[RMDB]
Chemical mapping of a 177-nucleotide RNA with 2A3 and DMS. For DMS the reverse transcriptase was MarathonRT. The DMS profile rests on 18,269 reads. The reactions ran in a buffer of 150 mM KOAc, 10 mM MgCl2 and 150 mM bicine (pH 8.5), at 24 C. The data come from the RNA Mapping Database (RMDB), library OK1LIB.

RNA sequence: GGGAACGACUCGAGUAGAGUCGAAAAUAGUGAUGUUACCCGUGGUACUGGGUUAACCCAUAGAGUAGGCAAGCGUCUUUGUGUUAAGUCCGUGUACGUGCUAGGAAAGAUAUGGAUGGAUGAAAACUGAACAGAGAUAGUUCGCUAUCUCUGUUCAAAAAGAAACAACAACAACAAC
Reactivity to 2A3 in 0.01 (KOAc 150mM, MgCl2 10mM, bicine 150mM(pH8.5), 24C), signal-to-noise 6, nucleotides 027 to 126: u200a020g160u090g100a110u100g050u060u090a110c010c000c010g010u060g060g000u060a030c060u060g000g010g020u100u090a040a060c000c000c020a020u080a040g080a010g020u140a050g030g090c070a050a030g030c020g050u000c000u020u050u080g090u010g040u050u090a050a010g020u050c010c020g020u020g010u060a070c060g000u030g020c010u040a040g040g040a040a050a040g040a030u050a050u140g110g010a020u030g030g010a010u030g090a100a010a020a030c060
Reactivity to DMS in 0.01 (KOAc 150mM, MgCl2 10mM, bicine 150mM(pH8.5), 24C), signal-to-noise 6, nucleotides 027 to 126: u030a090g010u020g010a080u000g000u010u000a060c020c000c010g020u010g010g030u010a030c080u010g000g010g000u010u010a090a090c040c030c010a070u010a090g000a110g020u010a070g010g000c040a040a070g010c060g010u010c030u010u000u010g010u020g010u000u010a080a100g010u020c030c020g000u010g010u010a040c040g020u010g000c020u000a130g000g010a050a070a050g010a050u020a080u020g010g010a050u000g000g000a060u010g010a060a060a050a110c190